[RMDB]
Chemical mapping of a 207-nucleotide RNA with DMS and 2A3. The reactions ran in a buffer of 150 mM KOAc, 10 mM MgCl2 and 150 mM bicine (pH 8.5), at 24 C. For DMS, 2,526 sequencing reads were counted. Values are in units of 0.01, from 0 to 300, in steps of 10.

RNA sequence: GGGAACGACUCGAGUAGAGUCGAAAAAGUUCUAGUCCUCACCUAAGAUCAGACUCACAUGGCCCUCAAAGGAAGAGCACUAGGUUGGGCUUUGUGGUGGGGAUCAGUGUCUCAUUUUUAGUCCCAAAUUAAAAACGAGAUUUUGGGCUGUACAUCACACUACUACCACUUUCGAGUGGUAGUAGUGAAAAGAAACAACAACAACAAC
Reactivity to DMS in 0.01 (KOAc 150mM, MgCl2 10mM, bicine 150mM(pH8.5), 24C), signal-to-noise 1, nucleotides 027 to 156: a090g000u000u000c020u000a120g010u000c000c010u000c020a060c020c010u000a090a080g010a090u000c100a150g020a070c020u010c020a130c090a060u000g000g010c010c020c010u000c030a070a150a180g020g000a190a140g020a070g030c060a120c030u000a070g000g000u000u000g020g000g030c020u000u000u000g040u000g040g040u000g010g020g020g010a040u000c050a050g010u000g010u020c000u000c010a060u000u010u000u000u000a090g010u020c060c130c080a060a040a100u010u000a020a010a000a030a050c040g000a050g010a070u000u020u000u000g000g000g070c020u000g000u000a080c110a180u000c030a230
Reactivity to 2A3 in 0.01 (KOAc 150mM, MgCl2 10mM, bicine 150mM(pH8.5), 24C), signal-to-noise 3, nucleotides 027 to 156: a000g050u070u070c010u030a000g020u000c000c010u020c010a010c020c010u100a120a030g020a130u130c090a040g140a190c080u030c040a020c000a050u060g010g000c020c020c000u040c060a130a110a040g080g010a050a050g020a010g050c040a030c070u050a050g120g000u100u040g020g000g000c000u010u010u020g030u030g000g010u000g000g000g000g000a010u040c020a000g010u030g030u040c020u020c050a080u060u130u040u050u190a020g100u140c020c000c000a000a010a000u060u050a040a020a010a020a020c110g030a070g010a140u030u010u000u060g000g010g000c030u030g020u070a050c030a070u120c040a050